This 207-nucleotide RNA was probed chemically with 2A3 and DMS. The 2A3 profile rests on 1,927 reads. The DMS profile rests on 2,240 reads.
[RMDB]
RNA sequence: GGGAACGACUCGAGUAGAGUCGAAAAACAUAGGCCAUGCUUACGAGCAUGGCCUAUGACAAAUCUCAAGCAAUCAAGCAUUCUACUUCUAUUGCAACACUGAGGAGCUUACGAGCUCCUCAGUGAAAAAAGAGAGUAAUGUUCGCAUUACUCUCAAGAUCUUAUUAGGGUUCGCCCUAAUAAGAUCAAAAGAAACAACAACAACAAC
Reactivity to 2A3 in 0.01 (KOAc 150mM, MgCl2 10mM, bicine 150mM(pH8.5), 24C), signal-to-noise 2, nucleotides 027 to 156: a000c010a000u000a010g000g000c000c020a030u020g020c010u140u120a080c250g110a020g010c000a000u000g000g000c000c000u000a000u000g000a000c000a000a040a020u030c000u020c030a060a000g000c000a010a070u100c020a020a060g060c030a170u130u090c030u110a090c040u080u030c020u110a040u060u000g010c020a110a040c000a070c010u000g010a000g010g000a000g020c020u090u080a100c250g040a020g000c000u010c000c000u000c000a000g000u000g010a000a000a000a010a000a010g000a000g000a000g000u010a000a000u010g010u030u040c070g010c070a000u010u000a000c000u000c010u020c010a010a020
Reactivity to DMS in 0.01 (KOAc 150mM, MgCl2 10mM, bicine 150mM(pH8.5), 24C), signal-to-noise 1, nucleotides 027 to 156: a160c000a020u000a000g000g010c000c010a000u010g030c010u010u000a120c300g000a120g000c010a030u000g010g000c000c010u000a000u000g000a050c070a060a060a120u000c020u030c020a050a040g030c100a130a150u010c100a080a080g030c040a150u000u000c110u000a030c040u000u000c060u010a110u000u000g000c010a150a300c000a010c000u000g000a010g030g000a020g000c010u000u000a160c250g020a080g030c000u000c000c000u020c000a010g000u000g010a000a030a080a080a050a110g010a010g000a010g000u030a000a020u010g020u010u010c290g080c020a020u000u000a000c010u000c000u000c010a010a030
For 2A3 the reverse transcriptase was SuperScript II with manganese.